[RMDB]
RNA sequence: GGGAACGACUCGAGUAGAGUCGAAAAGAUAUGGACGUCACCACGAGCUUGGAUUUAUCGGAAACGAUUGUCAGCUCUGGUACGUCCUAAGUCAAAAGAUCGGUGAAAGUUCGCUUUCACCGAUCAAGAUGAACCAAGAGUUCGCUCUUGGUUCAUCAAAAGAAACAACAACAACAAC
Reactivity to 2A3 in 0.01 (KOAc 150mM, MgCl2 10mM, bicine 150mM(pH8.5), 24C), signal-to-noise 4, nucleotides 027 to 126: g020a020u050a040u140g010g010a000c000g000u050c140a010c040c020a040c230g010a000g030c040u250u280g140g010a100u300u300u160a020u070c000g020g020a050a050a050c020g000a020u010u020g020u020c020a010g010c000u020c000u010g000g000u000a000c000g010u000c000c000u010a010a000g000u000c010a030a060a000a150g000a010u000c030g010g000u000g000a010a000a000g040u090u180c290g070c100u020u000u020c000a000c010c000g020a000u010c000a000a000
Reactivity to DMS in 0.01 (KOAc 150mM, MgCl2 10mM, bicine 150mM(pH8.5), 24C), signal-to-noise 3, nucleotides 027 to 126: g010a030u000a300u000g010g000a030c000g010u010c180a000c000c000a010c230g010a030g030c000u000u010g030g000a010u010u000u010a010u000c000g000g010a070a090a190c010g000a020u010u000g020u000c010a010g000c000u000c000u020g000g020u000a010c010g010u000c000c000u010a000a090g000u000c030a120a110a110a110g000a000u000c000g010g000u000g000a010a010a010g020u000u000c210g020c000u000u000u000c010a000c000c000g010a000u000c000a010a080